[RMDB]
RNA sequence: GGGAACGACUCGAGUAGAGUCGAAAAUUGUUAUCUAAAGAUUGCCAUUCUGAAAUGCUGUAAAUAGCAUGAUUCAAAUCAUCUUGUGCUGCAGCAGUUUCUUUGUAAUAUGCUUCAUAUAUUUCACUUAUCGUUAUCAGUUCGCUGAUAACGAUAAAAAAGAAACAACAACAACAAC
Reactivity to DMS in 0.01 (KOAc 150mM, MgCl2 10mM, bicine 150mM(pH8.5), 24C), signal-to-noise 6, nucleotides 027 to 126: u010u010g010u010u000a040u000c070u020a080a090a100g010a060u010u010g020c060c090a060u020u000c070u010g010a060a060a080u010g010c000u010g010u010a030a080a090u030a050g020c100a000u000g010a030u000u030c170a070a080a090u010c140a040u010c040u010u000g010u010g020c090u000g010c030a020g020c020a050g000u000u000u010c010u010u000u000g000u010a020a040u000a040u000g010c140u010u020c130a050u020a060u000a050u000u000u010c040a100c180
Reactivity to 2A3 in 0.01 (KOAc 150mM, MgCl2 10mM, bicine 150mM(pH8.5), 24C), signal-to-noise 7, nucleotides 027 to 126: u060u030g040u050u050a130u050c080u120a110a050a070g040a100u070u080g040c040c010a040u100u040c030u050g020a040a040a040u020g000c000u000g010u080a040a120a200u090a080g000c010a010u020g010a020u070u160c090a080a060a140u100c020a030u020c030u040u110g010u030g020c020u010g000c000a000g000c000a040g040u010u030u000c000u030u060u060g030u020a020a060u060a050u150g030c020u040u070c090a020u090a010u020a080u150u050u050c060a070c030